[RMDB]
RNA sequence: GGGAACGACUCGAGUAGAGUCGAAAACUCGGAGGAAGAGUCAGAUACUGCUUGACAGGAGCUGCUCCCAUGAGUGCUGAUGUUCAGGAGUUCCUCAAGUGCUGCUUCUGCUGCCCUCUCUUCGAGGAACUAUCGGCCAUUUCGAUGGCCGAUAGUUAAAAGAAACAACAACAACAAC
Reactivity to DMS in 0.01 (KOAc 150mM, MgCl2 10mM, bicine 150mM(pH8.5), 24C), signal-to-noise 2, nucleotides 027 to 126: c000u010c010g010g000a040g000g010a010a020g020a050g010u000c020a020g000a100u010a110c060u010g010c030u010u000g000a210c090a030g020g010a050g020c030u010g010c020u000c010c040c060a140u000g000a050g020u000g000c090u010g000a040u030g000u010u000c070a010g000g010a110g000u010u010c060c010u000c030a030a060g010u000g010c150u000g010c070u000u000c000u000g030c250u010g000c030c040c000u000c040u000c020u000u000c040g000a030g000g010
Reactivity to 2A3 in 0.01 (KOAc 150mM, MgCl2 10mM, bicine 150mM(pH8.5), 24C), signal-to-noise 1, nucleotides 027 to 126: c010u010c000g020g020a030g040g000a080a100g020a010g060u040c010a000g000a080u060a100c040u080g060c030u110u140g050a060c000a030g030g020a020g000c070u070g040c000u040c000c050c000a090u080g000a010g070u120g060c070u090g060a250u150g100u110u100c040a030g000g060a030g120u040u070c010c010u000c000a040a000g030u010g040c070u020g000c010u020u000c020u030g040c020u010g000c040c040c000u020c020u000c000u000u020c010g010a000g000g020